[RMDB]
RNA sequence: GGGAACGACUCGAGUAGAGUCGAAAAUGCGAUAAACGGCACCUAUAAGGUGGUGCCGAACCAGCGUGACCUACCAACACGCAACGAGCAGUCUGGUUUGACUGCAAACCUAUGGUAAACAAAAGAAAUAUUGGUUAUUAUUCGUAAUAACCAAUAUAAAAGAAACAACAACAACAAC
Reactivity to 2A3 in 0.01 (KOAc 150mM, MgCl2 10mM, bicine 150mM(pH8.5), 24C), signal-to-noise 7, nucleotides 027 to 126: u050g010c040g070a080u100a080a130a030c000g000g010c000a000c000c020u110a100u060a300a120g250g040u090g000g000u000g010c000c030g000a000a000c010c000a000g000c000g000u010g020a100c010c010u010a020c000c010a020a030c010a000c020g010c020a020a040c050g020a030g010c000a010g000u000c010u080g250g080u180u230u180g010a000c000u000g010c000a000a020a040c040c010u090a100u110g030g000u070a110a130a040c060a050a090a020a010g140a040a170
Reactivity to DMS in 0.01 (KOAc 150mM, MgCl2 10mM, bicine 150mM(pH8.5), 24C), signal-to-noise 7, nucleotides 027 to 126: u000g020c100g010a110u000a050a100a160c010g010g000c000a000c000c000u000a140u010a140a140g030g030u010g010g020u000g010c000c000g010a030a030c090c070a130g000c010g010u000g000a030c030c020u000a020c010c010a210a070c010a010c000g010c010a110a080c160g010a190g010c000a010g010u000c010u010g030g010u000u010u010g000a020c000u000g000c000a020a050a080c040c030u000a040u010g010g000u010a020a110a100c170a050a060a100a140g000a090a080